[RMDB]
RNA sequence: GGGAACGACUCGAGUAGAGUCGAAAAGUUGUUGAAAAAUGACCUGAGAGCAUGAGGCGAGACCCGUAGCGCAGGGCAAAACUUCCACGGGCAACUGUGGGACGGCUCUGUAAAAAAGGAGAGGGAGCAUCAUCUUAUAGUUCGCUAUAAGAUGAUGAAAAGAAACAACAACAACAAC
Reactivity to 2A3 in 0.01 (KOAc 150mM, MgCl2 10mM, bicine 150mM(pH8.5), 24C), signal-to-noise 1, nucleotides 027 to 126: g040u000u000g000u050u030g060a010a060a020a030a070u080g030a050c000c010u050g030a070g000a020g100c040a050u090g030a030g030g000c000g020a020g040a050c070c020c000g020u040a010g070c040g000c030a010g020g020g000c030a230a250a040a100c020u040u000c010c000a010c000g010g000g000c030a030a090c030u040g010u020g000g000g000a000c010g010g010c000u000c000u010g030u050a070a100a020a000a000a020g070g000a040g020a000g030g010g000a000g020
Reactivity to DMS in 0.01 (KOAc 150mM, MgCl2 10mM, bicine 150mM(pH8.5), 24C), signal-to-noise 4, nucleotides 027 to 126: g010u000u000g020u000u000g000a030a060a040a090a090u000g010a110c020c020u000g000a140g000a090g020c050a050u010g010a050g000g020c050g000a090g010a110c030c010c040g020u010a060g030c170g010c010a010g000g010g010c020a040a060a060a090c300u000u000c000c000a000c010g000g010g010c280a060a080c010u010g000u000g000g000g010a020c090g000g000c000u000c010u000g000u000a000a050a040a040a030a060g000g010a090g020a110g010g010g010a130g010